This 177-nucleotide RNA was probed chemically with 2A3. 2A3 adducts were read by reverse transcription with SuperScript II with manganese.
RNA sequence: GGGAACGACUCGAGUAGAGUCGAAAAAGUCGCGAACGCGGCAUCCCAGGUGGCGGCAUUCCCACGCGUGCGUGAAGCGCUUCUUCGCCGCCAACGCGCAUUCCGCGAAGCGCCUGGUUUAAUCGCCCCAGCGCUGAUGGUUCGCCAUCAGCGCUGGAAAAGAAACAACAACAACAAC
Reactivity to 2A3 in 0.01 (KOAc 150mM, MgCl2 10mM, bicine 150mM(pH8.5), 24C), signal-to-noise 1, nucleotides 027 to 126: a000g000u030c000g000c000g050a300a170c260g000c000g000g000c000a080u120c030c000c000a000g000g020u050g010g000c000g100g020c060a000u000u140c000c080c000a000c030g040c030g000u200g030c050g000u170g080a060a070g000c000g000c040u090u000c050u070u020c100g030c060c020g000c060c000a010a060c050g000c000g020c050a020u070u000c050c000g030c010g060a060a030g040c000g040c000c000u020g000g090u000u080u140a140a100u190c070g050c000c000
The 2A3 profile rests on 498 reads.